[RMDB]
RNA sequence: GGGAACGACUCGAGUAGAGUCGAAAAGACCGUUAGUUCGCUAACGGUCAAAUAAAAUCAGCGGUAACGAGGCCUAAAAUAUUACCGCUGAACGCCUCGUUAAAAACAGGAGCUUCGGCUCCUGUAAUCCGAACAUAUGAUUCGUCAUAUGUUCGGAAAAAGAAACAACAACAACAAC
Reactivity to DMS in 0.01 (KOAc 150mM, MgCl2 10mM, bicine 150mM(pH8.5), 24C), signal-to-noise 3, nucleotides 027 to 126: g010a010c010c000g020u010u000a000g000u000u010c190g010c010u010a010a000c010g000g000u000c000a000a040a050u000a060a070a110a110u000c010a000g020c010g010g010u000a000a020c120g020a100g000g020c150c180u000a060a060a100a080u010a150u000u000a010c000c010g010c020u000g000a010a040c170g000c030c010u000c210g000u010u000a040a060a100a120a030c010a000g000g000a020g010c010u000u010c200g030g000c000u000c000c000u000g000u000a010a060
Reactivity to 2A3 in 0.01 (KOAc 150mM, MgCl2 10mM, bicine 150mM(pH8.5), 24C), signal-to-noise 3, nucleotides 027 to 126: g000a000c000c000g000u010u010a010g010u040u050c170g010c190u010a000a000c000g000g000u000c010a000a020a000u010a000a000a000a070u030c000a000g020c010g000g030u020a000a020c070g040a130g120g100c020c090u130a130a130a030a050u220a040u040u030a010c010c000g000c010u000g000a010a020c020g040c000c010u090c060g030u080u200a100a080a030a010a000c000a000g020g000a010g030c020u060u080c160g100g000c000u000c000c000u010g000u000a000a010